[RMDB]
An RNA of 177 nucleotides, treated with DMS and 2A3 and read out base by base. The RNA was probed in 150 mM KOAc, 10 mM MgCl2 and 150 mM bicine (pH 8.5) at 24 C. The 2A3 profile rests on 935 reads. For DMS, 902 sequencing reads were counted.
RNA sequence: GGGAACGACUCGAGUAGAGUCGAAAAGUGCAUCAAGGCCGCCGCCGAUCGGGUCGUGUUUAUCAACACUGGCUUCUUGGACCGCACCGGCGACGAGAUCCACACCUCAAUGGAGGCCGGCCCGAUACUGACUGCACUAGUUCGCUAGUGCAGUCAGAAAAGAAACAACAACAACAAC
Reactivity to DMS in 0.01 (KOAc 150mM, MgCl2 10mM, bicine 150mM(pH8.5), 24C), signal-to-noise 1, nucleotides 027 to 126: g000u010g010c060a070u000c130a060a090g000g030c040c010g030c000c040g020c030c090g020a030u020c060g000g010g000u010c020g010u000g000u010u000u000a090u020c140a060a030c040a040c080u000g030g020c060u000u000c010u010u000g010g000a140c100c050g020c030a150c130c300g000g000c000g000a090c010g010a130g040a060u000c030c010a050c120a100c010c010u000c050a190a060u030g030g000a010g000g020c250c020g010g000c000c000c030g000a050u010a060
Reactivity to 2A3 in 0.01 (KOAc 150mM, MgCl2 10mM, bicine 150mM(pH8.5), 24C), signal-to-noise 1, nucleotides 027 to 126: g010u010g020c020a070u040c020a050a040g120g010c030c000g060c020c010g060c000c000g080a000u000c030g040g010g000u010c010g040u020g050u060u050u070a180u130c080a040a000c030a010c120u070g060g000c070u090u000c040u030u050g050g010a060c030c020g020c000a070c010c020g040g000c010g010a040c010g000a010g000a020u010c030c000a060c000a050c020c000u110c050a070a300u200g140g020a030g050g020c030c050g020g010c010c010c000g000a010u000a120